[RMDB]
RNA sequence: GGGAACGACUCGAGUAGAGUCGAAAAGUGUUAUGUACGUAGUUAGCCGCGAUAUUGAUGUGUACUGGUUGCACGCGAUUAUACGACGUUAGCCGUACGUAUGCACGGUUAAUGUGUCGCGCACGUGAUUGCAUAACCGGCGCAUGCGUGCCAACUGGGAUGUUACCAGCUUCGGCUGGUAACAUCCAAAAGAAACAACAACAACAAC
Reactivity to 2A3 in 0.01 (KOAc 150mM, MgCl2 10mM, bicine 150mM(pH8.5), 24C), signal-to-noise 1, nucleotides 027 to 156: g020u020g000u150u070a180u180g080u080a040c010g000u010a020g070u020u000a000g000c010c130g000c010g010a000u020a010u060u240g180a220u090g090u010g010u040a040c070u060g180g100u090u000g000c010a000c040g040c020g000a000u270u000a000u270a150c100g030a000c070g010u000u120a000g000c030c000g030u000a040c010g000u090a030u080g000c000a000c010g010g010u050u040a200a110u000g010u000g030u070c000g000c000g050c020a110c190g020u020g030a160u120u300g000c000a000u000a040a000c000c000g010g000c040g010c000a010u040g000c010g020u000g210c000c000a080a000c040u070g010
Conditions: 150 mM KOAc, 10 mM MgCl2 and 150 mM bicine (pH 8.5), 24 C. Structure probing data (2A3) for a 207-nucleotide construct.